An RNA of 207 nucleotides, treated with DMS and 2A3 and read out base by base. The reactions ran in a buffer of 150 mM KOAc, 10 mM MgCl2 and 150 mM bicine (pH 8.5), at 24 C. The DMS profile rests on 2,989 reads. For 2A3, 3,050 sequencing reads were counted.
RNA sequence: GGGAACGACUCGAGUAGAGUCGAAAAUACCGUCUUCACCCCGACGGUUUCAAUCCAUAGCUUCACGUUGUGUAGCGUAGGUGGAAGGUAUCGUGUGGUGUAUAAACACCACAUAGUCUCUUAGGGGUCAAGCUGAUAAACUUCGGUUUAUCAGCAACGCCAGUAUGCUAUUCGUAGCAUACUGGCGAAAAGAAACAACAACAACAAC
Reactivity to DMS in 0.01 (KOAc 150mM, MgCl2 10mM, bicine 150mM(pH8.5), 24C), signal-to-noise 1, nucleotides 027 to 156: u000a070c020c020g000u010c020u010u000c060a030c000c000c010c040g000a060c000g000g000u010u000u010c040a060a100u000c010c020a080u000a180g030c010u010u010c000a030c050g050u000u010g020u000g010u000a060g010c000g030u000a070g030g010u000g000g000a110a110g000g020u000a030u000c050g000u000g020u000g020g040u000g000u000a100u010a150a130a120c000a000c020c000a020c010a000u000a020g000u000c090u000c010u020u000a190g040g000g000g000u010c040a070a260g030c000u010g030a020u000a000a020a010c000u010u010c300g080g010u000u000u000a000u000c010a000g000c000a000a000
Reactivity to 2A3 in 0.01 (KOAc 150mM, MgCl2 10mM, bicine 150mM(pH8.5), 24C), signal-to-noise 4, nucleotides 027 to 156: u030a000c000c000g000u010c020u090u100c030a000c000c000c000c000g010a010c010g000g040u000u020u060c050a030a070u010c000c000a050u070a090g000c010u050u040c000a010c080g300u300u270g020u100g030u050a030g030c050g100u120a080g110g030u020g010g030a040a020g080g020u120a060u190c060g000u010g000u000g010g020u010g080u030a100u170a250a220a010c000a000c000c000a000c000a000u000a000g020u000c010u000c000u120u230a020g000g000g000g010u010c010a040a060g010c000u000g000a010u000a000a000a000c000u020u020c120g060g020u000u000u000a000u000c000a010g000c000a000a000